[RMDB]
RNA sequence: GGGAACGACUCGAGUAGAGUCGAAAAAUCGGUUAGAUCUGGCAUACUCAUACUGCUAGAUUCCUCUACCCUUUUCAAGUGGGCCUGGGAGGACUUUGGAUACCACUUCCAAACUAAUCCCAUUUGCAUAAAAAAUUCAAGUUCUUGCAUGAUUUGCCACUACCUCGUCUUUCGAGACGAGGUAGUGAAAAGAAACAACAACAACAAC
Reactivity to 2A3 in 0.01 (KOAc 150mM, MgCl2 10mM, bicine 150mM(pH8.5), 24C), signal-to-noise 3, nucleotides 027 to 156: a000u080c020g010g030u120u120a020g010a060u000c000u000g000g000c010a050u070a180c110u130c220a090u210a270c030u050g000c000u010a020g000a020u070u060c020c010u050c060u080a090c010c010c000u080u070u040u080c090a100a040g000u040g030g000g040c010c030u050g060g010g010a020g020g020a010c030u050u080u080g070g000a040u100a250c000c040a080c080u060u010c000c000a020a040a050c040u140a040a030u060c000c000c000a000u060u080u120g030c020a000u210a000a090a070a020a070a160u280u190c100a170a060g110u050u090c000u080u070g000c020a050u080g070a230u300u210u190g030c030

Description: Chemical mapping of a 207-nucleotide RNA with 2A3. The data come from the RNA Mapping Database (RMDB), library OK3TST. As a SHAPE reagent, 2A3 marks flexible, mostly unpaired nucleotides at the ribose 2'-OH. For 2A3 the reverse transcriptase was SuperScript II with manganese. The reactions ran in a buffer of 150 mM KOAc, 10 mM MgCl2 and 150 mM bicine (pH 8.5), at 24 C.